RNA sequence: GGGAACGACUCGAGUAGAGUCGAAAAGCGCGACGGGCUCGGGCUGCGUCUCGAGCUGCGACUGCACGACGCGCGCGACAGCAACGUGCGGGUGGUCGGCGCCCUGCGCCGCCCGGCCGACGCCGUCGGCUGGGUUCUAAUUCGUUAGAACCCAGCCAAAAGAAACAACAACAACAAC
Reactivity to DMS in 0.01 (KOAc 150mM, MgCl2 10mM, bicine 150mM(pH8.5), 24C), signal-to-noise 1, nucleotides 027 to 126: g020c100g030c010g010a100c030g030g000g030c000u000c000g020g000g000c010u010g040c230g010u030c030u000c020g010a020g010c010u000g040c050g000a100c080u000g040c010a180c030g000a080c040g010c040g030c010g000c020g010a130c160a110g000c070a130a080c050g000u000g010c000g010g000g000u000g010g000u010c000g030g040c060g000c000c080c110u000g000c020g010c010c020g010c040c010c030g010g010c010c010g000a040c050g000c010c050g010u010c090
Reactivity to 2A3 in 0.01 (KOAc 150mM, MgCl2 10mM, bicine 150mM(pH8.5), 24C), signal-to-noise 1, nucleotides 027 to 126: g000c020g000c020g000a050c050g000g060g010c080u080c040g010g000g010c050u250g100c100g090u040c030u010c060g020a030g020c020u060g010c010g000a050c090u120g020c010a020c070g210a060c020g040c000g010c010g000c020g100a070c060a100g060c010a060a070c030g060u140g040c000g030g030g110u030g000g000u000c040g080g080c000g000c060c090c050u090g010c040g000c010c040g060c030c000c000g030g030c000c020g020a040c020g020c040c020g070u060c060

Structure probing data (DMS and 2A3) for a 177-nucleotide construct. The DMS profile rests on 1,860 reads. It was measured as part of the RMDB library OK2TRN. The RNA was probed in 150 mM KOAc, 10 mM MgCl2 and 150 mM bicine (pH 8.5) at 24 C.